[RMDB]
RNA sequence: GGGAACGACUCGAGUAGAGUCGAAAACGGUGGAGCGGCUGCAAAAGAGCCGUCUCGCUGGGUAAAAUCAGGAUGUGCCGCGGAACCCGCUCCUCAGCUAGUCACACUUCGGAAGCGCGGGCAACGCACAGCAGGGUGUUUUCGAACACCCUGCUGUAAAAGAAACAACAACAACAAC
Reactivity to 2A3 in 0.01 (KOAc 150mM, MgCl2 10mM, bicine 150mM(pH8.5), 24C), signal-to-noise 2, nucleotides 027 to 126: c010g000g000u050g080g020a010g010c000g030g000c000u030g000c020a110a120a130a060g090a110g000c010c010g160u030c000u000c000g000c000u000g020g020g040u130a070a090a000a140u170c070a010g120g020a110u090g070u060g080c080c060g000c080g050g000a100a080c010c000c000g010c010u000c010c040u020c010a020g050c040u070a020g020u090c030a020c030a010c070u080u060c050g000g040a100a050g090c040g000c030g030g010g010c040a050a020c000g030c000
Reactivity to DMS in 0.01 (KOAc 150mM, MgCl2 10mM, bicine 150mM(pH8.5), 24C), signal-to-noise 2, nucleotides 027 to 126: c000g000g000u000g030g020a130g010c020g000g020c020u050g000c140a200a100a150a240g000a030g020c010c000g000u010c010u000c020g090c000u000g000g000g010u000a040a010a050a100u020c100a080g000g000a100u000g000u010g000c100c070g000c060g000g000a240a180c040c040c080g010c040u000c030c000u000c050a080g000c020u060a080g000u060c180a150c070a300c100u000u000c000g010g000a040a040g000c110g000c000g000g000g000c100a020a200c090g020c040